Source: RMDB library OK1LIB, as collected in RNAgym.
An RNA of 177 nucleotides, treated with 2A3 and DMS and read out base by base.
For DMS the reverse transcriptase was MarathonRT.
For 2A3, 15,130 sequencing reads were counted.
The DMS profile rests on 27,835 reads.
The reactions ran in a buffer of 150 mM KOAc, 10 mM MgCl2 and 150 mM bicine (pH 8.5), at 24 C.
RNA sequence: GGGAACGACUCGAGUAGAGUCGAAAAAUCACGAGAUGACAGACGAACUUGACACCGGCCCUGGUAAAAGGUCGUAUGGCCAGGACAGAGUGUCUUAUGCGACACUCUGUAUAGUGGCCGAUACAGAGUAAAUACUUAAUUUCGAUUAAGUAUUUACAAAAGAAACAACAACAACAAC
Reactivity to 2A3 in 0.01 (KOAc 150mM, MgCl2 10mM, bicine 150mM(pH8.5), 24C), signal-to-noise 5, nucleotides 027 to 126: a010u060c030a010c060g080a050g020a120u080g060a070c050a040g040a010c020g030a060a080c030u040u090g020a030c010a020c090c000g050g000c010c000c010u060g030g010u060a080a100a010a010g040g020u030c020g000u030a050u090g000g000c000c000a030g060g070a000c000a000g000a000g000u000g010u000c000u030u150a210u230g060c030g000a000c010a000c000u000c000u000g000u000a010u000a010g110u020g000g000c000c000g000a000u020a010c020a010g130a000
Reactivity to DMS in 0.01 (KOAc 150mM, MgCl2 10mM, bicine 150mM(pH8.5), 24C), signal-to-noise 7, nucleotides 027 to 126: a060u020c040a100c090g010a090g010a090u000g000a100c110a100g000a070c050g010a080a040c030u010u000g010a110c140a060c050c010g010g010c030c020c010u010g010g010u010a040a070a070a070g010g010u000c060g000u000a030u020g000g000c000c000a030g000g010a020c010a000g000a010g010u000g000u000c000u010u050a070u030g010c170g000a010c000a000c010u000c000u000g000u000a010u020a070g010u000g000g010c010c000g010a050u010a020c060a120g010a200